Description:
The data come from the RNA Mapping Database (RMDB), library M2PK90. This 177-nucleotide RNA was probed chemically with DMS.
RNA sequence: GGGAACGACUCGAGUAGAGUCGAAAAUGAAAUAAACGGCACCUAUAAGGUGGUGCCGAACAAGCGUGACCUAGGAACACGCAUCCAGCAGUCUCCUAUGACUGCAAAGGUAUCCUAAUUAAAAAAACAUAUACUGUAUCUUCGGAUACAGUAUAUGAAAAGAAACAACAACAACAAC
Reactivity to DMS in 0.01 (KOAc 150mM, MgCl2 10mM, bicine 150mM(pH8.5), 24C), signal-to-noise 4, nucleotides 027 to 126: u020g000a140a100a100u000a040a090a140c010g010g010c000a000c000c000u010a110u030a140a120g030g040u000g030g020u010g000c000c000g010a080a040c120a090a090g000c030g000u000g000a090c080c120u000a120g000g000a090a120c000a000c020g000c010a110u010c010c020a120g000c000a010g000u000c010u010c260c170u010a070u010g000a010c000u000g010c000a010a030a060g010g000u000a050u010c000c010u000a030a100u040u080a010a000a050a050a060a090a160
The DMS profile rests on 3,627 reads.